[RMDB]
RNA sequence: GGGAACGACUCGAGUAGAGUCGAAAAGGAUCUGAGUACUUAUAAGUGCGAAGUGAGUGAGGGUCUUACGAGCACCAAUUACACCCCUCUAUUAAGUAUCGAAGAUCGGCCGGAGAUCGAGAUACAACUAUUAACCGGCGACUGUACGAAGAUCCGACCUAUCGUCGAUAUUCGUAUCGACGAUAGGAAAAGAAACAACAACAACAAC
Reactivity to DMS in 0.01 (KOAc 150mM, MgCl2 10mM, bicine 150mM(pH8.5), 24C), signal-to-noise 2, nucleotides 027 to 156: g010g020a010u000c020u000g030a300g020u030a010c050u000u000a200u020a090a010g020u000g010c060g000a160a220g000u000g010a060g100u000g020a220g000g030g010u020c050u020u020a060c020g020a300g000c020a010c070c070a070a100u000u000a080c030a030c030c020c000c060u020c030u000a130u000u010a100a160g020u010a030u010c000g020a170a270g020a060u000c000g060g040c120c150g010g000a170g030a020u000c090g000a300g020a070u000a020c060a060a120c170u000a030u010u000a140a080c000c000g010g000c050g060a210c080u020g030u000a040c030g000a210a060g000a100u010c020c040g060a050
Reactivity to 2A3 in 0.01 (KOAc 150mM, MgCl2 10mM, bicine 150mM(pH8.5), 24C), signal-to-noise 4, nucleotides 027 to 156: g000g010a000u040c020u030g010a000g020u010a020c040u120u160a100u140a300a070g000u010g010c020g010a060a010g010u000g010a000g000u090g010a010g000g000g050u210c000u000u000a010c010g010a010g010c010a010c050c060a080a140u170u170a080c030a200c070c020c000c000u000c020u010a200u130u140a170a040g000u000a010u000c020g010a070a000g010a010u010c020g030g010c010c000g000g000a090g000a000u000c000g000a000g000a050u000a000c000a010a040c010u020a040u290u040a100a070c000c000g000g010c010g050a030c070u080g000u010a000c000g000a010a000g000a000u000c000c010g000a000

An RNA of 207 nucleotides, treated with DMS and 2A3 and read out base by base. DMS adducts were read by reverse transcription with MarathonRT. High 2A3 reactivity points to a flexible backbone, as in loops and unpaired stretches. The DMS profile rests on 1,567 reads. For 2A3 the reverse transcriptase was SuperScript II with manganese. Conditions: 150 mM KOAc, 10 mM MgCl2 and 150 mM bicine (pH 8.5), 24 C. It was measured as part of the RMDB library OK3TST.